Chemical mapping of a 177-nucleotide RNA with 2A3 and DMS. High 2A3 reactivity points to a flexible backbone, as in loops and unpaired stretches. The RNA was probed in 150 mM KOAc, 10 mM MgCl2 and 150 mM bicine (pH 8.5) at 24 C. The data come from the RNA Mapping Database (RMDB), library 15KREP. For DMS, 2,087 sequencing reads were counted.

RNA sequence: GGGAACGACUCGAGUAGAGUCGAAAAUAUCAGUUAGAUUCACUGCUAACAAAAUUGUUGGUGGUGCUCCUACAUGGUUUAAUGCGUUGCGUGACUUUACGUUAAAGGGUUAUGUUCUUGCUACCAUUAGCAUAUUAGUCUUCGGACUAAUAUGCUAAAAAGAAACAACAACAACAAC
Reactivity to 2A3 in 0.01 (KOAc 150mM, MgCl2 10mM, bicine 150mM(pH8.5), 24C), signal-to-noise 2, nucleotides 027 to 126: u070a000u000c000a000g040u070u070a010g000a060u060u060c000a010c020u020g000c010u050a000a020c040a040a130a150a190u190u060g020u010u020g000g020u020g000g020u000g020c010u000c010c000u000a040c020a070u050g020g040u080u030u180a160a020u080g020c090g160u140u100g010c000g020u060g020a010c010u060u020u040a020c010g090u030u100a110a040a040g050g000g010u010u020a060u110g030u000u110c010u020u050g000c010u070a080c010c050a140u040
Reactivity to DMS in 0.01 (KOAc 150mM, MgCl2 10mM, bicine 150mM(pH8.5), 24C), signal-to-noise 3, nucleotides 027 to 126: u000a040u000c010a130g000u000u000a030g010a100u000u000c030a010c020u000g020c010u000a000a010c010a060a160a130a160u030u010g010u010u020g000g020u000g000g030u000g010c300u010c010c000u000a030c070a160u000g000g000u000u000u000a080a050u000g010c060g030u010u020g000c030g020u000g020a010c030u000u000u000a000c000g000u010u010a050a070a180g000g000g000u000u010a080u010g020u000u000c020u010u000g000c070u000a120c140c090a110u010